[RMDB]
RNA sequence: GGGAACGACUCGAGUAGAGUCGAAAACAUCAGUCGUUCGCGACUGAUGAAACGUGCAAGCGGUGCACGAAAAAGUCGAUCGAAUACCGAUCGACAAGCGCUAAAGAUAGGCCUUCGGGCCUAUCAAGACUGAUAUCAAGUUCGCUUGAUAUCAGUCAAAAGAAACAACAACAACAAC
Reactivity to DMS in 0.01 (KOAc 150mM, MgCl2 10mM, bicine 150mM(pH8.5), 24C), signal-to-noise 4, nucleotides 027 to 126: c000a010u000c010a010g020u000c000g030u010u010c180g020c010g010a000c000u010g000a010u000g020a040a080a190c010g010u000g000c010a050a080g000c010g000g010u010g010c000a000c000g000a040a060a040a030a060g010u000c000g000a010u000c010g000a240a160u010a140c220c000g010a010u000c000g000a000c000a030a030g010c010g000c020u010a100a110a140g010a000u000a000g010g000c000c000u000u010c210g040g010g010c000c000u000a000u000c000a050a080
Reactivity to 2A3 in 0.01 (KOAc 150mM, MgCl2 10mM, bicine 150mM(pH8.5), 24C), signal-to-noise 6, nucleotides 027 to 126: c000a000u000c000a000g010u010c010g040u050u100c220g000c010g100a000c000u000g000a000u000g000a010a010a000c000g000u000g000c000a060a080g020c020g120g170u060g000c010a000c070g230a050a010a000a000a000g000u000c000g000a010u000c000g010a060a040u110a300c140c000g000a000u000c000g010a000c000a000a010g080c010g000c030u080a140a060a010g000a000u010a000g000g000c000c010u020u080c250g050g000g000c000c000u000a000u000c000a000a000